[RMDB]
RNA sequence: GGGAACGACUCGAGUAGAGUCGAAAAACAUUAAUUGGUCCUUGAGUUUUCUAAUGGAAAGACCUUAGAAUAGACUCAAGUUCUGCUAGGCAGUGUAAGAACUACACUGUAUUAGUCUGUUCUUACACGGCUAUCAUGGCUUCGGCCAUGAUAGCCGAAAAGAAACAACAACAACAAC
Reactivity to 2A3 in 0.01 (KOAc 150mM, MgCl2 10mM, bicine 150mM(pH8.5), 24C), signal-to-noise 1, nucleotides 027 to 126: a000c080a000u230u300a140a110u210u200g060g040u120c060c000u000u010g000a000g000u120u060u000u090c060u060a160a260u300g000g000a040a040a300g030a300c000c040u000u000a000g000a000a030u120a060g080a000c000u000c000a000a000g100u100u010c000u060g120c090u080a110g130g080c010a000g000u000g000u000a180a200g000a040a000c040u040a000c000a000c010u040g000u000a170u020u020a000g030u000c230u080g000u000u000c000u000u020a040c020a000